An RNA of 177 nucleotides, treated with DMS and 2A3 and read out base by base. The reactions ran in a buffer of 150 mM KOAc, 10 mM MgCl2 and 150 mM bicine (pH 8.5), at 24 C. Values cover nucleotides 27 to 126.
RNA sequence: GGGAACGACUCGAGUAGAGUCGAAAAGGUAAGGGGAGUGAAAGGGUGGCUGUGGCGGCUGUUCCCUGUGGCUGGUGGCCAUGGAUAAGUGAAGAGGAACGUGAUGCUGGGCACCAUGCUGGUGGUGACAUGCAGUAGCAUUCGUGCUACUGCAUGUAAAAGAAACAACAACAACAAC
Reactivity to DMS in 0.01 (KOAc 150mM, MgCl2 10mM, bicine 150mM(pH8.5), 24C), signal-to-noise 5, nucleotides 027 to 126: g000g010u010a080a100g010g000g000g010a120g000u020g010a110a120a110g000g000g030u010g000g000c080u010g040u000g000g010c080g010g000c040u000g000u000u010c010c010c010u000g030u000g010g010c020u000g010g010u010g010g000c000c020a040u010g000g000a110u010a080a100g010u000g010a080a090g000a120g000g000a030a060c070g020u000g000a090u010g010c050u000g000g010g000c020a040c030c030a030u010g020c080u010g010g010u010g000g000u000g000
Reactivity to 2A3 in 0.01 (KOAc 150mM, MgCl2 10mM, bicine 150mM(pH8.5), 24C), signal-to-noise 4, nucleotides 027 to 126: g050g000u090a030a040g030g010g010g020a050g020u130g080a200a040a030g070g020g010u060g040g000c060u060g040u060g110g020c040g040g000c010u010g040u030u020c020c010c010u040g010u040g040g020c020u060g110g140u120g130g020c000c000a030u040g000g040a050u040a250a060g100u090g170a080a030g040a060g050g060a040a020c030g020u070g010a030u090g040c020u020g000g010g030c000a010c000c000a020u130g030c030u080g030g060u050g010g030u040g030